[RMDB]
RNA sequence: GGGAACGACUCGAGUAGAGUCGAAAAAUGGCAAUCAGCUGGAGGAGGUGUUCCGUCAAAACAGCACUGAGUUCCGAGCAGGAGAUCUGAUAUUUGGCGACAGCUUCGACAAUGAGAUGAGACACAGUAGCUUUUCAACAUUCGUGUUGAAAAGCUAAAAAGAAACAACAACAACAAC
Reactivity to DMS in 0.01 (KOAc 150mM, MgCl2 10mM, bicine 150mM(pH8.5), 24C), signal-to-noise 4, nucleotides 027 to 126: a090u020g010g010c040a120a090u000c050a150g010c120u000g000g000a180g000g010a020g000g010u000g010u000u010c160c040g020u000c020a010a040a050a090c050a020g000c130a070c050u000g000a090g000u010u000c070c060g020a170g000c080a040g000g000a130g010a090u020c020u020g020a090u020a090u010u000u000g000g020c030g000a070c060a040g010c040u000u000c030g020a060c030a020a050u030g010a070g020a070u000g000a100g000a100c060a050c130a120g020
Reactivity to 2A3 in 0.01 (KOAc 150mM, MgCl2 10mM, bicine 150mM(pH8.5), 24C), signal-to-noise 2, nucleotides 027 to 126: a000u040g020g000c020a020a080u040c010a060g070c070u040g000g000a020g040g010a030g000g090u010g020u100u030c030c000g040u000c010a000a000a060a090c000a010g090c010a010c060u070g040a030g090u100u060c030c030g050a090g060c050a050g000g080a100g000a070u000c000u020g010a020u020a230u170u050u000g000g000c010g010a030c020a030g090c000u000u030c030g020a030c010a010a080u040g030a030g020a060u030g060a010g040a020c030a000c010a080g050